Source: RMDB library TTRDES, as collected in RNAgym. The record gives the reactivity of an RNA of 177 nucleotides to 2A3 and DMS. The reactions ran in a buffer of 150 mM KOAc, 10 mM MgCl2 and 150 mM bicine (pH 8.5), at 24 C. For DMS the reverse transcriptase was MarathonRT. For DMS, 3,305 sequencing reads were counted.
RNA sequence: GGGAACGACUCGAGUAGAGUCGAAAAGAUAUGGACGUGGUGACUGAGCUUUGAUCUAUGAUCGGAAACGAUCAUAGGGAGCUUUCAUGACGUCCUAAGUCAAAACGGUGUGCUUCGGCACACCGAACAGACAGUUCAAGUUCGCUUGAACUGUCUGAAAAGAAACAACAACAACAAC
Reactivity to 2A3 in 0.01 (KOAc 150mM, MgCl2 10mM, bicine 150mM(pH8.5), 24C), signal-to-noise 4, nucleotides 027 to 126: g020a010u000a020u040g000g000a000c010g010u040g050g040u040g150a110c300u300g140a070g030c020u300u300u020g000a010u000c000u010a000u000g000a010u000c000g000g000a000a000a000c000g000a000u020c000a000u000a000g000g000g000a000g000c000u170u300u070c030a040u060g210a000c010g000u000c000c000u000a000a000g010u000c040a010a000a130a120c030g000g000u010g000u000g000c020u060u160c300g190g000c000a000c000a000c000c000g000a020a010
Reactivity to DMS in 0.01 (KOAc 150mM, MgCl2 10mM, bicine 150mM(pH8.5), 24C), signal-to-noise 4, nucleotides 027 to 126: g020a010u010a030u020g000g000a000c000g060u000g020g090u000g010a110c300u000g000a020g010c010u010u000u010g000a000u030c000u000a010u000g010a010u000c010g000g000a000a020a020c000g010a010u000c000a010u000a000g000g000g000a010g000c000u000u010u000c010a000u000g000a000c020g000u000c000c000u000a000a050g000u000c000a060a050a060a270c000g000g010u000g020u000g010c000u000u000c120g030g010c010a010c000a010c000c000g000a030a070